[RMDB]
RNA sequence: GGGAACGACUCGAGUAGAGUCGAAAAGAUAUGGAUGUGUACACCUUUUGACGAAUGGAUAGACGAUGUUGUCGGAAACGACAAUACAUCGUCUAUCCAUUCGAUAAGGUGGACACAUCCUAAGUCACACUUUCUAUUACUUCGGUAAUAGAAAGUGAAAAGAAACAACAACAACAAC
Reactivity to DMS in 0.01 (KOAc 150mM, MgCl2 10mM, bicine 150mM(pH8.5), 24C), signal-to-noise 6, nucleotides 027 to 126: g010a040u010a300u010g010g010a020u010g030u000g010u000a020c000a010c000c000u010u000u020u010g010a270c210g000a020a010u000g000g000a020u000a010g010a020c000g010a010u000g020u000u010g010u000c010g010g000a110a090a250c010g020a010c000a030a080u010a090c010a020u000c000g010u000c000u000a000u000c000c000a000u000u000c000g010a060u000a000a000g000g030u010g000g000a010c010a000c000a000u000c000c000u000a020a060g010u000c040a300